An RNA of 207 nucleotides, treated with 2A3 and DMS and read out base by base. The reactions ran in a buffer of 150 mM KOAc, 10 mM MgCl2 and 150 mM bicine (pH 8.5), at 24 C. The 2A3 profile rests on 3,391 reads. For DMS, 2,623 sequencing reads were counted. Reactivities are given for positions 27 through 156.

[RMDB]
RNA sequence: GGGAACGACUCGAGUAGAGUCGAAAAUCUCCUUCGGGAGACCAAGAGAUAUGGAAGAAUCUCUAGCGUGUACGACGAAGGGAACUAUGGUCGGAAACGACCAUAUAGUACCAGAGUAUCGGGUUCUUCCUAAGUCAUUCUCGCUAUUCGUAGCGAACUUUUAGAAACACUUCGGUGUUUCUAAAAGAAAAGAAACAACAACAACAAC
Reactivity to 2A3 in 0.01 (KOAc 150mM, MgCl2 10mM, bicine 150mM(pH8.5), 24C), signal-to-noise 5, nucleotides 027 to 156: u020c010u020c030c000u030u060c270g110g000g000a010g020a030c040c020a120a040g110a010g010a080u050a040u190g010g010a000a010g000a030a020u030c080u050c080u180a210g080c150g080u260g070u160a080c090g070a040c040g050a260a090g010g000g000a010a000c000u000a000u010g000g000u010c010g000g040a090a100a070c010g000a000c000c010a000u000a000u000a000g000u000a000c000c000a010g000a040g030u040a040u080c010g010g000g000u010u000c010u000u000c000c000u000a020a000g020u020c010a040u200u060c030u020c050g000c010u030a050u080u160c260g100u050a010g010c010g020a050a070
Reactivity to DMS in 0.01 (KOAc 150mM, MgCl2 10mM, bicine 150mM(pH8.5), 24C), signal-to-noise 2, nucleotides 027 to 156: u020c000u000c000c000u010u010c280g040g030g030a050g000a070c030c040a080a090g040a060g000a040u010a160u000g010g000a100a030g000a060a010u000c000u010c070u010a120g010c180g000u000g020u000a040c010g010a130c070g000a190a160g020g000g000a190a180c180u000a010u010g010g000u000c000g000g040a160a120a300c010g030a000c000c000a020u000a000u000a140g030u000a170c010c000a050g020a300g050u000a080u000c080g000g000g010u000u010c020u000u030c010c000u000a050a100g010u000c020a170u000u000c040u000c010g000c010u000a040u000u010c160g060u010a070g010c010g010a070a120